[RMDB]
RNA sequence: GGGAACGACUCGAGUAGAGUCGAAAACCGGCGAAAUCGAGGGUUUGGGUGAAAGCCGUGUCGAUGGGCUGGUCGGGGUUGAUCGUGCUGGCAUCGAUUUCGUAGGGGCCGAGAUGUUCGGUGGUGACGAAGAGUAGUGUUUCGACACUACUCUUCGAAAAGAAACAACAACAACAAC
Reactivity to 2A3 in 0.01 (KOAc 150mM, MgCl2 10mM, bicine 150mM(pH8.5), 24C), signal-to-noise 5, nucleotides 027 to 126: c000c010g030g010c030g060a040a020a030u070c040g000a040g030g070g020u070u160u160g130g020g020u100g100a110a010a000g000c020c040g060u090g040u050c010g020a060u150g040g060g000c030u040g010g050u050c020g020g000g040g000u030u140g060a080u090c060g020u070g060c010u040g030g000c000a050u020c010g040a030u040u080u070c000g000u010a050g020g010g050g010c010c020g010a040g010a080u250g120u120u050c020g010g010u010g010g150u080g020a020
Reactivity to DMS in 0.01 (KOAc 150mM, MgCl2 10mM, bicine 150mM(pH8.5), 24C), signal-to-noise 3, nucleotides 027 to 126: c010c020g010g000c030g010a030a040a010u000c030g020a060g000g020g020u040u020u020g000g000g000u040g000a080a070a090g010c000c010g000u020g010u020c040g010a090u020g010g000g000c040u010g010g000u000c060g000g000g000g020u020u030g000a080u010c080g000u030g030c030u020g000g010c080a150u010c000g000a030u000u010u010c020g040u000a080g000g000g020g020c020c000g010a080g000a100u030g020u030u000c030g000g020u020g010g020u020g000a190